[RMDB]
RNA sequence: GGGAACGACUCGAGUAGAGUCGAAAAACCUCGCUGUUUUCUUGGCUAACUUUCAGCGAGGUGAGGCAAGGCGGCAAAAAAAAGUUGGGAGCAGCAACGGCAAGCAAAAAAAAGGUUCCAGCCGAGGCACUUAGUGCAAGCUUCGGCUUGCACUAAACUAUGUUACGAGAUUCGUCUCGUAACAUAGAAAAGAAACAACAACAACAAC
Reactivity to 2A3 in 0.01 (KOAc 150mM, MgCl2 10mM, bicine 150mM(pH8.5), 24C), signal-to-noise 1, nucleotides 027 to 156: a000c000c000u000c000g000c000u010g030u010u080u050u020c070u160u280g080g000c060u060a090a040c000u040u060u030c000a010g000c010g000a000g000g000u010g010a040g010g010c080a030a030g050g000c080g050g000c050a080a000a010a010a000a000a000a060g050u070u060g010g010g010a040g030c050a000g000c010a040a030c020g050g000c040a030a050g020c040a050a060a020a040a010a000a040a090g060g000u090u050c050c020a010g030c010c010g020a040g040g040c040a020c110u030u010a000g000u000g010c000a000a010g000c000u010u040c140g040g000c000u010u020g000c020a000c000u000a000a000a000